RNA sequence: GGGAACGACUCGAGUAGAGUCGAAAAAGUCAACUCUUCGGAGUUGACUAAAAACCGUAGGCCUCGCAUGGCUAGCGUCCGGGUUCGAAAGAGCCCAGGACGCUUGGACCCAUGACGAGGCCUAAACGGAAAAAAGCUUAGACUUCGGUCUAAGCAAUAGGAAUAUACUGUUCGCAGUAUAUUCCUAAAAAGAAACAACAACAACAAC
Reactivity to DMS in 0.01 (KOAc 150mM, MgCl2 10mM, bicine 150mM(pH8.5), 24C), signal-to-noise 1, nucleotides 027 to 156: a090g010u010c000a000a000c000u000c020u000u010c300g060g010a020g030u010u040g000a020c010u000a010a050a070a020a030c010c000g040u010a070g010g020c000c000u000c070g010c020a050u000g000g000c040u000a020g020c000g020u000c010c030g000g020g040u000u000c010g010a160a130a200g020a020g010c000c010c000a010g040g000a010c010g020c000u000u000g020g020a060c230c020c000a020u000g020a170c000g010a030g020g050c000c000u010a000a010a020c000g000g020a000a040a130a080a070a100g000c020u010u010a040g010a030c020u000u000c300g040g010u000c000u000a000a010g000c010a020a030